RNA sequence: GGGAACGACUCGAGUAGAGUCGAAAAUAAGACCAUAGCGAUGGGGGGAGAUGCUAGGAGUUGGGGGAGACCGAAGCGAGGAGGAAAGUAAAGAAAGCAACGGGGCUAGCCGUCAGGUGUUCCUCCCUGACUUGCUUGUUCGCAAGCAAGAAAAGAAACAACAACAACAAC
Reactivity to 2A3 in 0.01 (KOAc 150mM, MgCl2 10mM, bicine 150mM(pH8.5), 24C), signal-to-noise 8, nucleotides 027 to 129: u200a030a020g050a020c010c030a070u090a020g110c070g050a070u110g000g000g000g000g040g000a030g000a020u070g040c020u040a040g020g020a040g030u150u120g000g000g000g000g000a010g010a000c020c010g030a020a010g040c030g030a030g010g000a010g000g010a060a010a000g030u120a020a040a030g060a040a060a000g040c040a040a040c040g000g000g040g030c020u020a020g030c000c000g030u030c020a020g000g020u030g040u060u010c010c000u030c040c000c000u030g020a030
Reactivity to DMS in 0.01 (KOAc 150mM, MgCl2 10mM, bicine 150mM(pH8.5), 24C), signal-to-noise 7, nucleotides 027 to 129: u030a100a070g030a140c050c030a030u000a070g030c120g000a090u000g010g000g000g000g000g000a050g040a060u050g000c110u030a080g000g000a040g040u030u030g020g000g000g020g010a080g000a060c060c040g000a080a070g000c140g030a070g030g000a040g020g000a000a000a000g020u000a030a070a080g010a070a100a070g000c070a040a050c140g050g000g030g000c000u000a080g000c000c060g020u000c070a000g000g000u000g000u000u000c000c040u030c030c010c000u030g030a110